Chemical mapping of a 207-nucleotide RNA with DMS and 2A3. The reactions ran in a buffer of 150 mM KOAc, 10 mM MgCl2 and 150 mM bicine (pH 8.5), at 24 C. The DMS profile rests on 2,919 reads. DMS adducts were read by reverse transcription with MarathonRT.

RNA sequence: GGGAACGACUCGAGUAGAGUCGAAAAGGGUUUUGCGAUCUUUAAGCAGAUGGCAGGUUCACACCGUACGGUGCGGAAGUUCGCGCUUCCGUGAAACGCGAAAAUCGGACGGUGGCUGCAAGUCGCAUUGAAGGGAUCGCCUUCGGGCGAUCCCUAAGUAACCAAACUACUUCGGUAGUUUGGUUACAAAAGAAACAACAACAACAAC
Reactivity to DMS in 0.01 (KOAc 150mM, MgCl2 10mM, bicine 150mM(pH8.5), 24C), signal-to-noise 2, nucleotides 027 to 156: g000g000g010u010u000u020u000g010c020g000a050u000c050u000u010u000a120a190g010c090a060g010a060u010g030g040c000a070g030g040u020u000c120a070c040a020c010c010g020u000a030c030g000g000u020g020c040g000g010a130a060g030u000u020c190g020c300g040c010u000u000c010c120g050u000g010a080a040a030c070g010c020g010a120a040a100a060u000c040g000g020a010c030g050g020u000g020g000c000u010g000c040a070a060g010u000c030g040c030a100u010u000g000a130a070g020g020g030a050u010c000g040c000c010u000u000c300g020g030g080c000g030a010u000c010c000c000u000a000a020
Reactivity to 2A3 in 0.01 (KOAc 150mM, MgCl2 10mM, bicine 150mM(pH8.5), 24C), signal-to-noise 3, nucleotides 027 to 156: g070g020g000u010u070u070u040g000c000g000a040u090c090u030u180u130a090a070g050c100a040g010a170u170g070g010c030a000g010g020u150u210c090a030c010a000c060c000g000u020a010c010g010g010u020g020c000g000g000a010a020g000u080u220c070g020c030g000c080u000u000c000c000g010u030g070a140a100a030c120g030c030g060a030a020a030a090u010c000g000g000a000c010g000g000u010g030g000c000u020g000c000a020a020g040u020c010g020c030a010u010u120g060a040a030g000g010g000a000u000c000g000c000c010u040u070c110g060g000g000c000g000a000u000c020c000c000u000a000a010